[RMDB]
RNA sequence: GGGAACGACUCGAGUAGAGUCGAAAACUCUCACACGUCCGAGAAACAUCCGAAGGUCACGCUCACUGAACUAAAUAUGCUACGGCGCCAUCGGGAGCUCUGCGAUGUGGUGCUCAACGUGGGCGGACCACAAUCCAGCAUUCGUGCUGGAUUGUGGAAAAGAAACAACAACAACAAC
Reactivity to DMS in 0.01 (KOAc 150mM, MgCl2 10mM, bicine 150mM(pH8.5), 24C), signal-to-noise 1, nucleotides 027 to 126: c140u000c050u000c040a100c080a070c080g000u000c070c020g000a110g000a120a080a130c170a040u010c070c010g010a110a050g040g040u000c000a150c020g020c010u000c000a010c040u000g000a120a030c120u000a070a060a030u040a020u000g000c010u010a070c300g000g000c020g010c020c030a070u040c080g080g020g020a100g000c010u000c060u000g010c050g000a150u010g030u010g000g000u040g000c040u000c090a100a070c240g000u000g010g000g010c020g000g000a020
Reactivity to 2A3 in 0.01 (KOAc 150mM, MgCl2 10mM, bicine 150mM(pH8.5), 24C), signal-to-noise 1, nucleotides 027 to 126: c000u000c000u000c000a090c010a020c070g110u000c040c030g070a000g080a090a090a000c000a090u060c010c010g100a120a020g120g030u030c070a080c180g000c020u010c000a040c020u020g080a100a000c010u130a160a160a130u190a080u170g050c000u050a040c080g010g010c020g110c050c000a040u020c020g090g070g000a000g010c080u100c060u300g100c040g040a100u100g010u040g090g030u030g000c000u000c050a040a070c080g010u020g000g000g000c000g020g060a000